This 177-nucleotide RNA was probed chemically with 2A3 and DMS.
[RMDB]
RNA sequence: GGGAACGACUCGAGUAGAGUCGAAAAUGGUGCAGCCUUAAAACAUGCCCAAGAUGAAGGUAUUCCUUUGGUCAUUGUUUUGAUGAGUCAUCAACAUCAUCCACUUUUAGAAGAGCUGAUUGAGGAACGCGUGCAUUAGGUUCGCCUAAUGCACGCGAAAAGAAACAACAACAACAAC
Reactivity to 2A3 in 0.01 (KOAc 150mM, MgCl2 10mM, bicine 150mM(pH8.5), 24C), signal-to-noise 2, nucleotides 027 to 126: u090g010g040u040g000c010a030g050c000c000u000u020a000a010a000a010c010a010u020g000c050c010c000a000a020g120a070u190g030a100a000g070g070u160a240u110u160c000c000u030u040u060g020g020u030c020a030u060u150g070u050u040u000u030g050a060u030g020a040g050u050c000a000u020c000a030a040c000a080u080c000a010u030c020c050a020c010u050u030u040u190a160g070a220a020g030a010g010c040u020g030a080u000u050g030a050g040g080a100a040
Reactivity to DMS in 0.01 (KOAc 150mM, MgCl2 10mM, bicine 150mM(pH8.5), 24C), signal-to-noise 1, nucleotides 027 to 126: u020g030g010u020g000c080a090g010c020c070u020u000a020a040a030a050c060a060u000g000c110c000c030a050a030g010a110u020g040a050a110g010g010u020a160u000u010c010c020u000u000u000g000g000u000c020a000u010u020g010u000u000u000u000g010a010u000g030a160g030u000c080a030u000c020a060a060c060a080u000c030a040u000c010c090a020c110u000u010u000u020a050g000a050a020g000a190g000c070u000g000a080u000u010g010a140g000g000a020a100

It was measured as part of the RMDB library OK2TST. For DMS the reverse transcriptase was MarathonRT.